An RNA of 207 nucleotides, treated with 2A3 and DMS and read out base by base. It was measured as part of the RMDB library OK3TST. Reactivities are given for positions 27 through 156.
RNA sequence: GGGAACGACUCGAGUAGAGUCGAAAAAUGUCAUUAUUAAUUCUACAUCCAUCUUCUCUAGAAAAACUAUAUCUAUGUUGAUAGAAGUUAUUUUAACAGCCGCAUAUUCUACUAAGCCGUACAACAAUAAGGGAGAAAACCGACCUGUCUGUUUUCCCAUAUGUGAUAAUUUCGAUUAUCACAUAUGAAAAGAAACAACAACAACAAC
Reactivity to 2A3 in 0.01 (KOAc 150mM, MgCl2 10mM, bicine 150mM(pH8.5), 24C), signal-to-noise 2, nucleotides 027 to 156: a000u080g010u020c050a040u030u300a050u040u120a140a070u180u020c020u060a080c010a060u010c050c010a090u060c040u140u000c020u000c020u040a050g070a040a140a030a080a060c060u090a090u040a060u170c030u040a130u190g090u090u090g080a030u030a080g020a070a010g020u020u060a110u050u170u040u030a110a090c050a010g010c000c030g050c020a030u020a130u180u050c000u040a130c040u040a110a000g000c010c000g050u050a010c040a060a000c000a030a200u060a140a070g000g030g000a110g080a080a050a020a040c010c000g040a040c000c040u050g040u060c040u020g040u000u050u030u010c000c000
Reactivity to DMS in 0.01 (KOAc 150mM, MgCl2 10mM, bicine 150mM(pH8.5), 24C), signal-to-noise 2, nucleotides 027 to 156: a050u000g020u000c050a070u000u000a100u010u000a030a150u010u010c010u000a060c010a150u000c010c000a090u010c040u040u000c020u000c020u000a150g000a080a070a090a080a130c050u000a100u000a090u000c030u000a080u000g010u000u010g010a120u000a030g000a080a140g010u000u010a050u000u010u000u010a060a130c010a140g010c060c020g000c030a080u000a060u000u000c030u000a060c040u010a100a080g010c020c010g030u010a080c060a080a060c040a030a150u000a100a080g000g010g010a170g000a080a070a100a120c080c040g000a030c010c020u010g030u000c020u000g000u000u010u000u010c000c020